[RMDB]
RNA sequence: GGGAACGACUCGAGUAGAGUCGAAAAGAUAUGGACCGUCAUGAUAGCAACAGCCCUACUCGGAAACGAGUAGGGACAUGCUAAUAUGCGGUCCUAAGUCAAAGGGAUCGACUUCGGUCGAUCCCAACCAGAUUGGUUUGUUCGCAAACCAAUCUGGAAAAGAAACAACAACAACAAC
Reactivity to 2A3 in 0.01 (KOAc 150mM, MgCl2 10mM, bicine 150mM(pH8.5), 24C), signal-to-noise 1, nucleotides 027 to 126: g020a010u050a040u180g000g010a000c030c000g200u300c090a020u070g210a160u030a060g040c030a040a140c140a180g000c000c000c000u010a000c000u030c000g030g020a040a120a030c010g000a000g000u010a020g000g000g000a010c000a000u010g000c000u000a020a030u100a000u040g010c030g000g000u010c000c000u000a000a000g040u000c040a000a080a190g040g000g000a010u010c000g000a000c000u050u140c300g100g000u010c000g010a000u000c000c000c000a000a000
Reactivity to DMS in 0.01 (KOAc 150mM, MgCl2 10mM, bicine 150mM(pH8.5), 24C), signal-to-noise 1, nucleotides 027 to 126: g020a020u000a300u000g010g000a000c000c060g010u000c000a010u030g010a060u010a030g000c020a020a010c300a300g030c030c000c000u000a000c000u000c000g000g000a050a080a240c000g000a010g000u000a000g000g010g010a010c070a040u000g000c000u000a030a140u010a030u000g000c060g000g010u010c000c000u020a010a080g020u000c030a100a110a150g010g000g000a010u000c000g000a010c000u000u010c200g020g010u000c000g000a000u000c000c000c000a000a040